RNA sequence: GGGAACGACUCGAGUAGAGUCGAAAACUGCAGGUCAACGGAGCUUCUUCAGAUCAGCUAUUGCAGAAGAAAGGUCAGCCAAGCGCUCUGGGCCAGUUCGACUGUAUAUAGGAGCUUCUGAUUUCAACCAGAAGCUAACUCUCUCCGAAACAAUGAGCUGGUGCAUUUAGUUCGCUAAAUGCACCAGAAAAGAAACAACAACAACAAC
Reactivity to DMS in 0.01 (KOAc 150mM, MgCl2 10mM, bicine 150mM(pH8.5), 24C), signal-to-noise 1, nucleotides 027 to 156: c060u000g000c070a080g040g010u020c010a060a140c030g000g000a160g020c090u000u000c030u000u000c120a020g000a070u000c030a140g000c030u010a040u000u010g010c050a110g010a050a300g000a080a120a130g020g000u020c010a130g000c080c040a130a180g060c190g000c020u010c150u020g010g050g010c020c020a140g080u000u010c000g010a260c000u000g000u000a020u000a090u000a140g000g020a120g010c000u000u000c000u020g010a020u000u000u030c130a080a060c060c000a050g010a010a020g020c000u000a000a080c040u000c050u000c030u030c050c040g010a130a060a020c080a090a110u020g000a120g000
Reactivity to 2A3 in 0.01 (KOAc 150mM, MgCl2 10mM, bicine 150mM(pH8.5), 24C), signal-to-noise 3, nucleotides 027 to 156: c060u090g050c020a030g020g050u040c020a030a050c040g050g020a000g040c040u080u050c020u110u100c080a060g020a150u050c050a020g090c020u040a060u090u070g020c020a010g000a050a010g000a010a080a000g020g030u020c020a010g000c010c020a210a040g070c090g020c100u040c050u060g020g000g000c000c010a040g030u010u020c010g000a010c020u010g030u030a080u010a000u020a200g100g020a000g010c000u000u000c000u000g040a080u090u300u280c050a050a040c010c000a010g000a010a000g000c000u020a060a040c010u050c000u000c000u010c020c010g050a050a110a040c050a050a210u130g010a030g020
Structure probing data (DMS and 2A3) for a 207-nucleotide construct. Source: RMDB library OK3TST, as collected in RNAgym. 2A3 adducts were read by reverse transcription with SuperScript II with manganese. Conditions: 150 mM KOAc, 10 mM MgCl2 and 150 mM bicine (pH 8.5), 24 C.